This 207-nucleotide RNA was probed chemically with 2A3 and DMS.
DMS adducts were read by reverse transcription with MarathonRT.
2A3 adducts were read by reverse transcription with SuperScript II with manganese.
The DMS profile rests on 11,024 reads.
In probing experiments dimethyl sulfate is read out at A N1 and C N3, which are open when not base-paired.

RNA sequence: GGGAACGACUCGAGUAGAGUCGAAAAAGCACUGGUACGAUACGUCGUACCAGUGCAGUCGUUGGGAUGGAACGCAAUUAAAUACAUGUGUGACGUGUAUGUGCGAACGACGUAAUUAUUUUUCAAAAUCACGCUAUCGUGUUCGCACGAUAGCGAAUCAGAUAAAGAGGUUCGCCUCUUUAUCUGAAAAAGAAACAACAACAACAAC
Reactivity to 2A3 in 0.01 (KOAc 150mM, MgCl2 10mM, bicine 150mM(pH8.5), 24C), signal-to-noise 5, nucleotides 027 to 156: a000g000c000a000c010u000g010g010u000a010c000g030a010u020a050c220g110u000c000g000u010a010c000c000a000g000u000g000c000a000g000u000c000g010u030u050g090g040g030a120u100g070g060a150a040c010g000c020a020a060u160u150a160a160a020u040a010c020a020u020g090u030g160u190g220a060c030g010u000g000u010a010u030g060u030g020c000g020a030a000c010g020a010c020g000u040a070a070u080u150a090u030u140u020u030u090c060a050a030a050a100u120c040a050c070g000c000u010a010u000c000g020u000g060u040u050c150g020c080a000c010g000a000u000a000g000c000g000a000a020
Reactivity to DMS in 0.01 (KOAc 150mM, MgCl2 10mM, bicine 150mM(pH8.5), 24C), signal-to-noise 3, nucleotides 027 to 156: a110g000c010a010c000u000g020g050u000a000c000g040a070u000a080c260g050u000c000g030u000a010c000c000a010g010u000g030c010a010g010u000c030g020u000u000g000g010g030a160u000g000g010a070a240c030g010c010a050a150u010u000a040a090a050u000a010c000a030u010g020u000g030u010g010a080c030g050u000g010u000a010u000g010u010g020c050g010a050a110c040g000a040c030g010u010a060a070u000u000a180u010u000u010u000u000c070a030a050a170a170u010c140a130c010g020c010u000a030u000c040g030u000g000u000u000c300g000c010a000c010g000a020u000a010g020c020g000a000a020